RNA sequence: GGGAACGACUCGAGUAGAGUCGAAAAGUUGCAUGUGCAAUAGACGCGCUGCAGCGUACUCUUCACCUCUGCAAUCUUAUGCCUGCUGGACUCAUUCCUGCGGUUAUGAUUAUGUCUACAACCCUUUGCUAUAUGUGAGGUUCGCCUCACAUAUAGCAAAAGAAACAACAACAACAAC
Reactivity to 2A3 in 0.01 (KOAc 150mM, MgCl2 10mM, bicine 150mM(pH8.5), 24C), signal-to-noise 1, nucleotides 027 to 126: g020u020u000g000c000a040u190g020u010g000c030a000a070u020a090g050a060c040g010c000g030c170u260g040c070a060g000c020g000u130a250c020u000c010u000u040c010a000c030c020u000c010u030g020c030a010a030u040c020u060u120a040u190g030c010c020u040g020c010u030g050g000a020c010u000c150a090u100u080c000c030u060g010c030g000g050u040u040a030u060g020a040u100u100a030u220g050u030c030u040a030c040a060a050c000c060c000u030u010u030
The data come from the RNA Mapping Database (RMDB), library 15KREP. This 177-nucleotide RNA was probed chemically with 2A3. The RNA was probed in 150 mM KOAc, 10 mM MgCl2 and 150 mM bicine (pH 8.5) at 24 C. For 2A3, 1,097 sequencing reads were counted.